[RMDB]
Chemical mapping of a 207-nucleotide RNA with DMS and 2A3. For 2A3, 6,944 sequencing reads were counted.

RNA sequence: GGGAACGACUCGAGUAGAGUCGAAAAGGGAAAGCAUGCGUACGUCCACUCCUACAAGCAUGCGAAAGGAUGGCAUUCGUCGGAUGGGAAAGCAUGCGCAUGCGAAAGGAUGGCUUCUCAGCCUUGCCAUCCGAAACGUACGUAUUAGGACGAAUGCGUAUGAUUUUCUUUUCGAAGAAAAUCAUACAAAAGAAACAACAACAACAAC
Reactivity to DMS in 0.01 (KOAc 150mM, MgCl2 10mM, bicine 150mM(pH8.5), 24C), signal-to-noise 4, nucleotides 027 to 156: g000g000g000a080a050a110g020c080a080u000g030c020g020u000a010c020g030u000c040c060a140c100u000c090c050u010a150c090a070a180g020c020a020u010g020c010g000a060a110a120g010g020a190u000g040g040c000a060u000u000c040g040u010c020g010g000a200u000g000g000g000a110a110a170g020c070a070u000g010c010g030c030a050u000g020c020g020a060a100a150g010g010a060u000g000g000c010u010u000c060u000c130a160g020c110c050u000u000g010c000c010a030u000c010c000g000a040a050a030c020g030u010a010c000g010u000a090u010u000a140g010g010a050c030g000a050a020u000g020c060
Reactivity to 2A3 in 0.01 (KOAc 150mM, MgCl2 10mM, bicine 150mM(pH8.5), 24C), signal-to-noise 6, nucleotides 027 to 156: g040g010g010a160a150a010g080c060a020u050g000c000g010u010a010c000g000u000c080c050a110c140u130c020c010u130a090c070a100a000g010c000a000u020g000c000g030a020a030a010g170g030a120u160g100g000c000a000u010u020c010g000u000c010g010g080a150u050g010g000g030a070a090a010g050c060a050u130g050c000g000c030a010u020g010c020g060a040a010a000g010g010a000u010g010g010c010u130u050c130u090c130a090g060c030c040u040u040g000c000c000a000u000c000c000g000a010a030a000c010g000u000a000c000g000u030a040u050u110a060g040g000a000c000g010a020a000u000g000c000
It was measured as part of the RMDB library OK3TST.